[RMDB]
RNA sequence: GGGAACGACUCGAGUAGAGUCGAAAAGAUAUGGACUUGUAGGUGCUUGUUUCUAAGCAACAGCUACACCUGUCGGAAACGACAGUUGUAGACAUGCUUAGAAACAAGCACCGCAAGUCCUAAGUCAGUAAGUAUUCGUGUUCGCACGAAUACUUACAAAAGAAACAACAACAACAAC
Reactivity to DMS in 0.01 (KOAc 150mM, MgCl2 10mM, bicine 150mM(pH8.5), 24C), signal-to-noise 1, nucleotides 027 to 126: g000a020u000a300u010g010g010a000c000u000u000g010u010a050g100g000u000g060c010u000u000g000u000u000u000c000u000a000a000g010c000a000a070c300a220g000c000u000a000c000a010c070c010u000g010u000c010g020g000a170a190a190c010g000a040c000a000g010u000u000g010u010a010g020a030c090a240u010g020c000u010u000a010g000a020a020a020c000a000a000g030c030a000c000c000g000c000a000a010g000u000c000c000u010a000a060g010u000c050a170